[RMDB]
RNA sequence: GGGAACGACUCGAGUAGAGUCGAAAAGAAAGGCAGCGAGUGCAGCCCACGCAGCGGCAUGCUUUUGCAUGCCCAGUCGAGCCCACGACUGAGGGCAGCUGCGUCACUGAGGGCAGCUGCCGAAAGAAUAAUGGUCAUCAUUCGUGAUGACCAUUAUAAAAGAAACAACAACAACAAC
Reactivity to DMS in 0.01 (KOAc 150mM, MgCl2 10mM, bicine 150mM(pH8.5), 24C), signal-to-noise 7, nucleotides 027 to 126: g010a120a120a160g010g010c010a010g010c020g010a180g020u000g030c150a110g010c030c030c100a080c020g000c010a020g000c020g010g000c010a010u000g010c000u000u010u010u020g010c000a010u000g000c000c010c010a000g000u000c010g010a180g010c010c000c010a300c010g000a020c000u000g000a170g010g000g030c160a050g000c000u000g000c010g010u000c220a110c170u000g010a080g010g000g010c010a180g000c000u010g010c000c000g000a020a060a080g010a150
Reactivity to 2A3 in 0.01 (KOAc 150mM, MgCl2 10mM, bicine 150mM(pH8.5), 24C), signal-to-noise 5, nucleotides 027 to 126: g100a020a080a000g020g010c010a000g010c020g120a060g220u230g090c080a020g010c040c010c000a010c010g010c000a020g010c010g000g030c000a020u020g010c010u210u300u240u300g020c000a000u000g010c030c000c000a000g000u000c010g000a030g020c000c000c000a010c020g000a000c000u020g010a040g060g180g030c030a000g000c000u000g000c000g010u020c030a090c120u180g080a120g020g010g000c010a010g000c000u000g010c000c000g000a020a010a000g040a020